Overview
The record gives the reactivity of an RNA of 177 nucleotides to DMS and 2A3. The reactions ran in a buffer of 150 mM KOAc, 10 mM MgCl2 and 150 mM bicine (pH 8.5), at 24 C. For 2A3 the reverse transcriptase was SuperScript II with manganese.
[RMDB]
RNA sequence: GGGAACGACUCGAGUAGAGUCGAAAAAUUUGAAACUGUACAAUGUGAAUGACGAAAGGGUGGAUACGAAAUGGCUUCUAAAACAAAGAAGGCUAUUAUCGACGUAAAGAAACAAUUUGAGGCUGUUAUACCAUUGUACAUUCGUGUACAAUGGUAUAAAAGAAACAACAACAACAAC
Reactivity to DMS in 0.01 (KOAc 150mM, MgCl2 10mM, bicine 150mM(pH8.5), 24C), signal-to-noise 6, nucleotides 027 to 126: a080u020u010u020g010a120a060a070c060u000g000u010a060c100a070a060u000g010u000g000a090a050u000g000a070c070g020a050a050a040g010g010g010u010g010g000a090u010a080c050g000a030a050a040u010g010g000c000u000u010c020u000a030a050a080a130c300a090a080a040g000a030a020g020g010c010u010a010u010u000a100u000c040g000a120c130g010u020a020a040a050g010a070a060a070c130a080a060u020u010u000g010a080g010g010c030u000g010u000u000
Reactivity to 2A3 in 0.01 (KOAc 150mM, MgCl2 10mM, bicine 150mM(pH8.5), 24C), signal-to-noise 4, nucleotides 027 to 126: a000u170u120u130g050a050a060a030c060u060g020u110a040c060a070a140u120g100u080g060a070a050u070g020a010c030g030a050a020a030g070g030g010u040g000g060a060u050a130c040g010a010a000a020u020g020g010c020u000u010c010u050a070a130a030a020c070a040a120a000g050a030a000g140g000c020u010a010u080u020a170u030c040g030a040c050g030u060a030a030a050g080a040a080a000c040a040a060u040u040u120g030a020g030g000c010u000g010u060u000